Chemical mapping of a 207-nucleotide RNA with DMS and 2A3.
RNA sequence: GGGAACGACUCGAGUAGAGUCGAAAAGACCCUGACAUUGAUGUGCAGAUUGCCGAAGUGUCAGACGUCAAUGAUUCAAGGAUAACACUUGCCACAAGAGGUCGCGGUAUGGAGCGUUAUGAGGAAGAGAUAGUGCAGAUGGUGGAAACACCACCGAGCACGUAAGCAACUUCGGUUGCUUACGUGCAAAAGAAACAACAACAACAAC
Reactivity to DMS in 0.01 (KOAc 150mM, MgCl2 10mM, bicine 150mM(pH8.5), 24C), signal-to-noise 1, nucleotides 027 to 156: g050a160c000c020c000u070g020a020c020a060u000u040g000a180u000g040u000g000c000a140g010a180u010u020g060c010c000g000a050a100g010u000g010u000c070a040g020a040c070g030u000c020a120a050u000g000a140u020u040c050a100a060g010g000a200u010a050a170c060a050c010u000u000g000c020c040a060c050a120a230g010a150g010g000u000c040g010c050g000g040u010a160u000g020g010a040g030c010g000u030u000a040u000g000a050g010g000a040a000g000a030g020a020u000a050g040u000g000c020a130g010a020u010g020g060u000g000g000a300a150a210c010a010c010c000a030c000c010g000a170
Reactivity to 2A3 in 0.01 (KOAc 150mM, MgCl2 10mM, bicine 150mM(pH8.5), 24C), signal-to-noise 4, nucleotides 027 to 156: g050a020c010c000c010u040g000a000c000a010u000u070g070a120u100g110u210g050c120a090g150a300u100u150g020c020c000g030a070a000g000u000g030u050c020a010g010a050c040g010u020c010a010a060u050g080a150u120u070c070a090a050g070g010a120u110a200a010c050a010c070u050u170g070c040c040a060c030a060a020g040a010g020g050u060c050g000c040g100g030u080a080u170g030g020a050g010c030g010u040u030a070u160g030a060g050g010a050a010g010a000g020a050u090a060g050u050g020c030a010g040a170u090g050g030u010g030g000a070a040a000c070a030c010c000a010c020c010g000a010
High 2A3 reactivity points to a flexible backbone, as in loops and unpaired stretches. It was measured as part of the RMDB library OK3TST. For DMS, 1,991 sequencing reads were counted. High DMS reactivity at an A or C suggests that its Watson-Crick edge is free.